[RMDB]
The record gives the reactivity of an RNA of 207 nucleotides to 2A3. It was measured as part of the RMDB library OK3TST.
RNA sequence: GGGAACGACUCGAGUAGAGUCGAAAACGUUUAUGAGAAUACCAAGGUUCUACACCUGUCAGGCCUGACACCGAUUCAGCUGCAAAAUCUUCAGAUGUUUUUGAUUCUCUGUGUGUCAUGGACAAGUGUCAUACAUAGUGAUUUGCACAGAAAACCACGUAUGACGACGUUUCGACGUCGUCAUACGAAAAGAAACAACAACAACAAC
Reactivity to 2A3 in 0.01 (KOAc 150mM, MgCl2 10mM, bicine 150mM(pH8.5), 24C), signal-to-noise 1, nucleotides 027 to 156: c010g010u030u000u030a150u080g060a060g030a140a010u030a110c020c010a070a170g060g000u000u030c050u240a050c040a040c040c000u040g080u010c030a010g060g170c010c020u010g000a000c000a070c100c050g030a030u060u110c010a050g030c030u090g060c000a000a040a040a200u010c000u020u010c040a000g010a120u040g060u040u020u010u140u190g070a080u050u000c000u000c070u100g010u000g030u000g000u050c010a040u080g000g070a010c040a070a040g050u050g020u070c040a020u040a120c010a020u220a100g130u070g060a070u020u060u270g060c030a010c000a020g000a000a160a000a000c050c200a100